Chemical mapping of a 177-nucleotide RNA with 2A3 and DMS. In probing experiments dimethyl sulfate is read out at A N1 and C N3, which are open when not base-paired. Source: RMDB library TTRDEL, as collected in RNAgym. The reactions ran in a buffer of 150 mM KOAc, 10 mM MgCl2 and 150 mM bicine (pH 8.5), at 24 C. 2A3 adducts were read by reverse transcription with SuperScript II with manganese. The 2A3 profile rests on 18,788 reads.

RNA sequence: GGGAACGACUCGAGUAGAGUCGAAAAGAUAUGGACCGAGACAUGCUUGGACUCGGAAACGAGUCCAAAGCAACAGCUCGUGUCCUAAGUCAAAACUGUCGAAUACUGUUCGCAGUAUUCGACAGAACGUAGUAAAUGGGUUCGCCCAUUUACUACGAAAAGAAACAACAACAACAAC
Reactivity to 2A3 in 0.01 (KOAc 150mM, MgCl2 10mM, bicine 150mM(pH8.5), 24C), signal-to-noise 4, nucleotides 027 to 126: g030a010u060a040u130g000g010a000c000c020g000a000g020a030c070a070u080g010c000u000u010g000g000a000c000u000c010g000g050a040a020a000c010g000a000g010u030c000c010a000a000a000g000c000a010a020c020a030g030c000u010c020g140u210g000u050c000c000u000a050a010g060u030c030a000a010a140a200c000u000g000u010c000g000a000a000u000a000c000u010g060u070u090c300g000c140a000g000u000a000u010u000c000g000a000c010a000g000a000a000
Reactivity to DMS in 0.01 (KOAc 150mM, MgCl2 10mM, bicine 150mM(pH8.5), 24C), signal-to-noise 6, nucleotides 027 to 126: g000a040u010a300u000g000g000a010c010c000g010a020g010a070c040a250u000g000c000u000u000g010g000a000c000u000c000g000g010a040a060a090c010g010a020g000u000c000c000a010a010a040g020c010a030a060c280a130g000c000u000c000g000u010g000u010c000c000u000a000a080g000u000c030a060a060a120a200c000u000g000u000c000g010a000a010u000a010c000u000g010u000u020c210g010c010a010g020u000a010u000u000c000g000a010c000a000g010a060a090